[RMDB]
Conditions: 150 mM KOAc, 10 mM MgCl2 and 150 mM bicine (pH 8.5), 24 C.
Chemical mapping of a 177-nucleotide RNA with 2A3 and DMS.
RNA sequence: GGGAACGACUCGAGUAGAGUCGAAAAUAUUACAUCUUCGGAUGUAAUAACUCGUGGUGGCUGGCUUGUUGCUAGUGGCGCAACUGUUGCCAUGACUGCGCAAUCGCUCUGAAUUCGUUCAGAGCAAGAUACAAACAGAAUUCGUUCUGUUUGUAUCAAAAGAAACAACAACAACAAC
Reactivity to 2A3 in 0.01 (KOAc 150mM, MgCl2 10mM, bicine 150mM(pH8.5), 24C), signal-to-noise 9, nucleotides 027 to 126: u030a000u010u000a000c000a000u000c000u030u030c220g130g000a000u010g000u010a000a000u010a010a020c040u040c030g040u050g070g010u020g050g090c070u010g020g010c040u070u100g010u030u050g020c020u050a130g180u100g270g010c080g000c020a010a040c020u080g230u300u080g020c000c000a030u080g040a070c030u040g000c060g000c050a040a120u130c110g000c010u000c000u000g020a030a030u080u070c210g060u070u000c020a000g000a010g000c000a000a010
Reactivity to DMS in 0.01 (KOAc 150mM, MgCl2 10mM, bicine 150mM(pH8.5), 24C), signal-to-noise 9, nucleotides 027 to 126: u000a010u000u000a000c000a000u000c000u000u010c200g020g010a010u000g000u000a000a000u000a030a120c060u000c030g020u000g010g030u000g010g020c070u010g000g000c080u000u000g010u000u000g020c010u000a120g030u000g010g010c120g010c020a030a050c050u000g010u010u000g010c010c010a030u000g010a090c070u000g000c040g010c230a110a080u010c150g000c000u000c000u000g000a020a030u000u010c180g010u000u000c000a000g000a010g010c010a010a010
Source: RMDB library M2PK50, as collected in RNAgym.